Source information: This 177-nucleotide RNA was probed chemically with DMS and 2A3. 2A3 adducts were read by reverse transcription with SuperScript II with manganese.
[RMDB]
RNA sequence: GGGAACGACUCGAGUAGAGUCGAAAAGUUCGGCGGAAAUCCGUCAGCUAUAACGCUGUCAAGAAAACCCCAAAACCGUAAAAUGAGAGCAAUUCGCCUGGUUCCUCUUUAAAGUCAAACCAGGAGGAAACCAGAUAAAGUUCGCUUUAUCUGGUUUAAAAGAAACAACAACAACAAC
Reactivity to DMS in 0.01 (KOAc 150mM, MgCl2 10mM, bicine 150mM(pH8.5), 24C), signal-to-noise 9, nucleotides 027 to 126: g010u010u000c110g010g010c030g000g000a110a080a110u020c040c070g000u000c010a020g010c000u010a100u030a120a100c170g010c010u000g000u010c060a100a110g000a070a040a090a140c060c000c010c050a050a070a090a130c080c070g010u030a050a050a110a100u050g010a030g000a030g010c030a030a300u000u000c000g000c000c000u000g000g010u000u000c040c010u000c020u000u020u040a030a030a030g000u020c220a010a010a030c010c010a020g000g000a020g000g000
Reactivity to 2A3 in 0.01 (KOAc 150mM, MgCl2 10mM, bicine 150mM(pH8.5), 24C), signal-to-noise 9, nucleotides 027 to 126: g060u060u070c070g020g010c050g020g040a050a110a120u090c020c020g020u020c010a000g000c000u050a050u090a300a040c100g000c020u010g030u040c020a040a060g050a060a090a060a070c010c000c000c010a030a090a030a070c030c020g080u120a040a070a050a130u260g050a040g000a000g050c020a010a060u030u020c010g010c010c010u010g000g010u010u010c020c000u030c010u060u220u090a090a070a020g040u080c060a010a010a010c010c000a000g010g020a000g010g020
The reactions ran in a buffer of 150 mM KOAc, 10 mM MgCl2 and 150 mM bicine (pH 8.5), at 24 C. Values cover nucleotides 27 to 126.